[RMDB]
RNA sequence: GGGAACGACUCGAGUAGAGUCGAAAAUGACGUUAAACUGCUGCCUCAUACAUACUGACACCGGUUGCUCAACAGGCUGUGUGGGACAAUAGAAUAACAAGGCUGUCAAUUUGAGCUUGACGGCUGCAAAACCUGCAGUACUUCGGUACUGCAGGAACGUAAAGCGGAACUUCGGUUCCGCUUUACGAAAAGAAACAACAACAACAAC
Reactivity to 2A3 in 0.01 (KOAc 150mM, MgCl2 10mM, bicine 150mM(pH8.5), 24C), signal-to-noise 1, nucleotides 027 to 156: u110g020a050c060g000u050u050a090a040a020c020u030g020c010u020g010c050c000u020c000a020u040a010c020a000u080a000c000u080g090a080c030a060c060c090g090g020u150u070g050c090u120c090a030a020c000a050g080g000c000u030g000u000g010u030g000g000g050a000c010a020a030u030a050g080a020a030u060a060a000c060a030a100g030g000c010u000g000u000c000a010a010u060u100u230g050a020g120c050u000u000g000a010c000g050g020c000u010g000c020a030a080a000a120c000c000u020g000c000a000g000u000a000c020u050u060c170g100g000u000a000c000u000g030c000a000g010g000a000a000